[RMDB]
RNA sequence: GGGAACGACUCGAGUAGAGUCGAAAAUUUAGACGGGAAACUGGCCGCAAACAGCAUGGCGAUGCUAGCUCCCAUAGAGUGGCCAAUAACAUCAACGCUAUGCAACUUUAAUUGCUGCAUCGCAAGGGAGAGUAGUAGUCUUCGGACUACUACUCUCAAAAGAAACAACAACAACAAC
Reactivity to 2A3 in 0.01 (KOAc 150mM, MgCl2 10mM, bicine 150mM(pH8.5), 24C), signal-to-noise 3, nucleotides 027 to 126: u090u050u060a090g050a100c050g020g040g090a030a140a040c080u030g000g000c000c020g010c070a070a060a130c050a070g110c040a050u140g130g040c040g050a000u040g060c030u020a020g060c010u010c010c010c020a010u040a020g070a010g030u010g020g010c000c060a000a030u100a040a040c060a050u110c040a010a070c060g000c030u030a000u050g010c040a050a010c040u190u150u200a130a150u210u110g010c010u010g020c010a000u020c020g010c020a030a050g100g110
Reactivity to DMS in 0.01 (KOAc 150mM, MgCl2 10mM, bicine 150mM(pH8.5), 24C), signal-to-noise 2, nucleotides 027 to 126: u000u000u020a060g010a120c050g010g000g000a080a090a190c070u000g040g020c000c040g020c080a070a230a160c160a090g010c160a030u000g000g000c080g010a070u000g010c050u000a090g000c150u010c040c010c000a070u000a040g020a060g010u000g000g040c000c020a010a080u000a040a070c130a110u010c110a140a140c110g000c020u000a010u010g000c050a050a010c060u000u010u000a080a060u020u000g010c030u000g000c000a030u000c020g000c020a100a090g010g000
Structure probing data (2A3 and DMS) for a 177-nucleotide construct. In probing experiments dimethyl sulfate is read out at A N1 and C N3, which are open when not base-paired. The 2A3 profile rests on 2,047 reads. DMS adducts were read by reverse transcription with MarathonRT. The DMS profile rests on 1,269 reads.